RNA sequence: GGGAACGACUCGAGUAGAGUCGAAAAUUCUGUGGCAAGUUCCACCCACUGCAGUUCAUUUGACUUGGGUUGAAUCUCUUUCCUCCCUCCAUCACUUCAGCUGAACCUCUUCUGUGAUCCUCACCUGUUCUCUAGAGGUGAGACCAGGGCACAGUCAAUUUAGGGGAGUGUUCGCACUCCCCUAAAUAAAAGAAACAACAACAACAAC
Reactivity to DMS in 0.01 (KOAc 150mM, MgCl2 10mM, bicine 150mM(pH8.5), 24C), signal-to-noise 1, nucleotides 027 to 156: u000u000c050u000g020u000g020g040c020a080a080g010u000u000c010c010a150c070c010c000a070c060u010g010c050a130g010u000u000c050a200u010u000u000g010a120c040u000u010g010g000g000u010u000g010a080a150u000c030u000c030u000u010u010c030c020u000c030c000c020u010c020c010a150u010c030a060c030u000u000c030a110g030c020u000g030a030a060c060c020u000c050u010u000c030u030g060u000g050a050u010c030c000u000c030a030c060c020u000g030u000u000c090u000c100u000a180g010a070g020g010u010g010a060g010a000c040c000a020g000g030g020c070a050c030a090g030u010c050a040
Reactivity to 2A3 in 0.01 (KOAc 150mM, MgCl2 10mM, bicine 150mM(pH8.5), 24C), signal-to-noise 1, nucleotides 027 to 156: u100u030c030u010g060u050g000g040c040a090a000g020u020u030c010c010a010c000c020c000a030c050u010g040c000a060g000u010u190c090a090u120u080u170g080a080c040u000u060g000g030g020u020u020g070a110a090u110c060u090c000u030u040u050c000c000u010c030c030c010u010c030c000a060u060c020a020c010u120u030c010a030g010c010u030g010a040a040c030c040u040c070u130u070c000u020g050u040g010a030u070c020c000u020c000a020c030c000u070g050u280u050c120u000c020u030a020g010a010g280g000u020g000a010g000a000c000c000a000g000g000g010c020a010c010a030g020u090c020a030